Chemical mapping of a 177-nucleotide RNA with DMS and 2A3. For DMS the reverse transcriptase was MarathonRT. The reactions ran in a buffer of 150 mM KOAc, 10 mM MgCl2 and 150 mM bicine (pH 8.5), at 24 C. The 2A3 profile rests on 1,281 reads. Values cover nucleotides 27 to 126. Source: RMDB library OK2TST, as collected in RNAgym. For DMS, 1,267 sequencing reads were counted. For 2A3 the reverse transcriptase was SuperScript II with manganese.
RNA sequence: GGGAACGACUCGAGUAGAGUCGAAAACAAAAUAGGGUCGACUACUCAUCUUCGACGCGAGUGUGUGUGUUGUUCGCUCGUAGUCGUCUCGCGUUUGCGACGGCGUAAUUACGCCGCUCACACACACUGUCGGCUGAACGUUCGCGUUCAGCCGACAAAAAGAAACAACAACAACAAC
Reactivity to DMS in 0.01 (KOAc 150mM, MgCl2 10mM, bicine 150mM(pH8.5), 24C), signal-to-noise 2, nucleotides 027 to 126: c070a050a030a110a120u020a090g010g000g000u000c000g010a020c010u010a070c020u000c190a170u020c140u000u000c030g000a020c050g000c040g000a040g010u000g000u020g000u010g030u010g010u020u000g010u010u010c040g040c190u000c080g010u000a010g020u000c000g050u000c020u000c040g000c050g000u000u000u010g040c000g000a050c150g020g000c000g020u000a130a040u000u000a020c020g020c300c010g040c030u010c000a000c000a000c000a010c010a000c010
Reactivity to 2A3 in 0.01 (KOAc 150mM, MgCl2 10mM, bicine 150mM(pH8.5), 24C), signal-to-noise 2, nucleotides 027 to 126: c030a010a120a060a100u230a110g150g000g000u000c010g020a020c020u090a050c000u040c040a130u060c070u150u030c040g000a020c040g000c060g080a030g000u020g000u070g010u010g000u010g070u200u080g050u210u170c000g000c040u010c060g020u000a000g060u010c000g000u060c020u020c010g000c010g130u200u230u300g010c000g000a030c070g010g050c000g030u090a080a180u050u030a000c000g020c010c010g000c000u000c000a000c000a000c000a000c020a010c030